[RMDB]
RNA sequence: GGGAACGACUCGAGUAGAGUCGAAAAGUAGAACUCGUUUGGAUAUCCAGCACACAGGCUAUUCGGCAAGGUGGACAGCUUCAUUUCCAAGAUCAUCUCCGCCUUCUGCAACUUGCUGUUGGGCAAGGGCUAUCGUGCCUUUCGAGGCACGAUAGCCAAAAGAAACAACAACAACAAC
Reactivity to 2A3 in 0.01 (KOAc 150mM, MgCl2 10mM, bicine 150mM(pH8.5), 24C), signal-to-noise 1, nucleotides 027 to 126: g130u060a020g010a070a000c010u020c090g080u110u070u130g050g000a090u090a100u100c020c040a000g030c020a010c000a000c000a010g030g160c030u070a050u150u100c010g030g030c030a010a020g000g020u080g030g000a060c000a090g010c000u020u050c040a120u000u030u110c080c000a000a000g120a080u090c040a030u010c070u000c010c000g000c030c000u000u120c020u000g030c010a000a000c010u010u010g020c020u000g080u110u060g000g000g010c000a080a070g000